An RNA of 177 nucleotides, treated with DMS and 2A3 and read out base by base. The 2A3 profile rests on 511 reads. For DMS the reverse transcriptase was MarathonRT. It was measured as part of the RMDB library RFM100. The reactions ran in a buffer of 150 mM KOAc, 10 mM MgCl2 and 150 mM bicine (pH 8.5), at 24 C. 2A3 adducts were read by reverse transcription with SuperScript II with manganese.
[RMDB]
RNA sequence: GGGAACGACUCGAGUAGAGUCGAAAAGACAGAUCAUUCAAAUGUCUGCCCUAUCAUCUUUUGAUGGUAGUAUCUAGGACUACCAUGGUUGCAACGGGUAACGGGCAAUCAGGGUUCGAUUCCGGAGAUGCAUCGCCGGUUUCGACCGGCGAUGCAUAAAAGAAACAACAACAACAAC
Reactivity to DMS in 0.01 (KOAc 150mM, MgCl2 10mM, bicine 150mM(pH8.5), 24C), signal-to-noise 1, nucleotides 027 to 126: g000a030c000a010g040a110u030c140a130u060u030c300a230a220a090u000g000u000c070u000g050c030c050c000u030a010u070c070a000u000c000u000u000u030u000g040a000u000g000g000u010a000g020u000a030u050c080u000a110g020g000a000c040u030a010c040c000a080u000g000g000u010u010g000c000a040a110c050g010g000g010u000a120a090c000g090g000g000c000a000a000u020c000a000g000g030g010u020u000c040g020a050u000u000c000c020g000g000a040g020
Reactivity to 2A3 in 0.01 (KOAc 150mM, MgCl2 10mM, bicine 150mM(pH8.5), 24C), signal-to-noise 1, nucleotides 027 to 126: g000a000c000a010g140a070u090c060a030u110u290c100a160a000a150u010g000u000c000u000g100c010c000c000u000a010u030c010a000u000c050u040u180u180u300g000a000u020g040g080u000a050g020u000a040u030c060u040a050g000g000a000c000u060a000c050c010a060u030g000g010u000u000g000c080a300a140c070g000g030g000u260a090a210c020g000g000g090c000a000a000u020c030a000g000g000g000u000u120c060g000a000u090u000c000c020g020g010a070g000